The record gives the reactivity of an RNA of 177 nucleotides to DMS and 2A3. The data come from the RNA Mapping Database (RMDB), library OK2TST. The 2A3 profile rests on 1,636 reads.

RNA sequence: GGGAACGACUCGAGUAGAGUCGAAAAGGGAUAUUACGUCAGCGAGGACGGGUAUCCUGGCUGGAUGCCGCAGAAAUGGACAUGGAUACCCCGUGAGUUACCCGGCGGGCGCGCCUCGUUCAUUCACGACGUACAUGGUUUUCGAACCAUGUACGUCAAAAGAAACAACAACAACAAC
Reactivity to DMS in 0.01 (KOAc 150mM, MgCl2 10mM, bicine 150mM(pH8.5), 24C), signal-to-noise 3, nucleotides 027 to 126: g000g010g010a070u000a030u020u020a110c050g030u010c030a100g020c170g000a150g010g000a060c030g010g000g010u000a010u000c010c000u010g010g010c050u010g000g010a100u010g020c020c030g000c110a100g000a060a070a090u010g000g000a070c050a050u000g000g000a070u000a050c120c010c000c040g010u000g000a090g000u000u000a110c030c030c010g000g000c020g000g000g030c060g010c210g010c020c000u000c050g010u000u010c050a040u000u000c100a140c250
Reactivity to 2A3 in 0.01 (KOAc 150mM, MgCl2 10mM, bicine 150mM(pH8.5), 24C), signal-to-noise 2, nucleotides 027 to 126: g010g000g020a030u040a010u100u130a220c040g000u010c030a030g150c080g150a090g160g080a000c000g010g000g000u000a010u000c010c010u050g020g000c030u060g090g050a150u130g030c020c010g040c080a030g090a040a050a030u070g000g010a040c030a000u060g010g000a010u070a130c030c000c010c070g010u040g060a110g040u040u080a100c060c010c000g010g030c020g000g010g020c020g050c030g000c010c010u070c060g000u040u030c000a020u060u070c030a030c090
Conditions: 150 mM KOAc, 10 mM MgCl2 and 150 mM bicine (pH 8.5), 24 C. Reactivities are given for positions 27 through 126. For DMS the reverse transcriptase was MarathonRT.